The record gives the reactivity of an RNA of 177 nucleotides to DMS.
RNA sequence: GGGAACGACUCGAGUAGAGUCGAAAAUAGCGCCGUGGGGCGAGGGCUCAUGGCACCUGUGCUCUGUGGACCCAUGUGGGGAGCAAAGCGACAGGUUGGAGCUGCACUAACCCAGGCCCCAGGUCUGCACAAGCAGGGUCUUCGGACCCUGCUUGUGAAAAGAAACAACAACAACAAC
Reactivity to DMS in 0.01 (KOAc 150mM, MgCl2 10mM, bicine 150mM(pH8.5), 24C), signal-to-noise 1, nucleotides 027 to 126: u000a090g100c190g030c030c110g020u000g000g010g010g010c020g030a220g000g000g010c020u020c070a100u020g040g040c080a110c000c010u000g040u010g000c000u010c040u000g000u010g030g000a300c000c010c020a180u000g020u020g000g000g000g000a300g000c000a010a060a000g020c030g030a030c000a000g000g050u000u000g000g000a030g000c020u020g000c140a150c230u000a060a070c000c000c000a200g050g010c000c000c010c000a080g000g010u020c010u020g000
For DMS, 744 sequencing reads were counted.